[RMDB]
RNA sequence: GGGAACGACUCGAGUAGAGUCGAAAAGGGGUCGAUUAACACUUCCGGUGGAGCUUGGAUUUACUGAAGCCUCCACGGUUGUCAGCUCCACCGGAAGGGAAAGAUCGACGGAGGCACCCAAAAGAGGACGUGUAGACUUCGGUCUACACGUCCUCAACAUAGAAUCGUAGUUCGCUACGAUUCUAUGAAAAGAAACAACAACAACAAC
Reactivity to DMS in 0.01 (KOAc 150mM, MgCl2 10mM, bicine 150mM(pH8.5), 24C), signal-to-noise 1, nucleotides 027 to 156: g000g000g090g010u000c000g020a060u000u000a080a300c060a040c010u000u000c000c020g000g020u000g010g000a000g010c000u000u000g020g000a040u020u010u000a060c050u010g010a070a140g000c050c020u000c030c060a300c020g020g000u000u020g010u000c010a130g000c010u000c000c000a020c000c000g000g000a000a000g000g010g010a060a110a250g010a060u000c020g010a090c030g000g000a080g020g030c060a190c010c020c010a080a100a090a190g000a020g010g020a020c050g020u000g010u020a010g000a040c000u000u000c300g030g040u000c000u070a000c000a020c000g000u000c010c000u000c000a000a070